[RMDB]
RNA sequence: GGGAACGACUCGAGUAGAGUCGAAAAAGCGAUUUUGCCAUCUUUAAUACCAAUAUCCGCUUUAUAAAUACCGGUGUAAUCCACGAUUAAAGCGUUAGUGAUAAUCAAAUCCAGUUCUUCUUUGCUAUGGAAAUUAGACUUUCGAGUCUAAUUUCCAAAAAGAAACAACAACAACAAC
Reactivity to 2A3 in 0.01 (KOAc 150mM, MgCl2 10mM, bicine 150mM(pH8.5), 24C), signal-to-noise 3, nucleotides 027 to 126: a000g020c070g010a070u000u000u060u110g050c000c000a030u020c060u090u210u190a100a070u140a200c040c000a050a040u050a060u160c080c020g050c030u080u040u040a190u140a020a140a010u170a080c060c040g040g000u000g000u060a090a100u030c070c000a010c080g020a060u000u130a020a030a000g000c000g050u040u070a090g020u070g100a040u020a100a040u070c060a060a000a070u020c010c020a040g010u070u030c040u060u000c000u000u070u050g020c040u140a140
Reactivity to DMS in 0.01 (KOAc 150mM, MgCl2 10mM, bicine 150mM(pH8.5), 24C), signal-to-noise 2, nucleotides 027 to 126: a070g030c100g000a090u000u000u000u000g070c170c060a020u010c030u000u010u040a070a090u060a150c090c000a090a030u000a090u000c080c000g000c030u000u000u030a050u010a020a070a170u020a090c100c100g000g010u000g000u070a060a050u020c050c000a050c120g000a030u000u000a020a000a040g000c020g010u000u000a060g010u000g000a080u000a050a090u040c040a040a080a050u020c100c100a080g000u000u020c110u000u000c030u000u000u000g000c140u010a110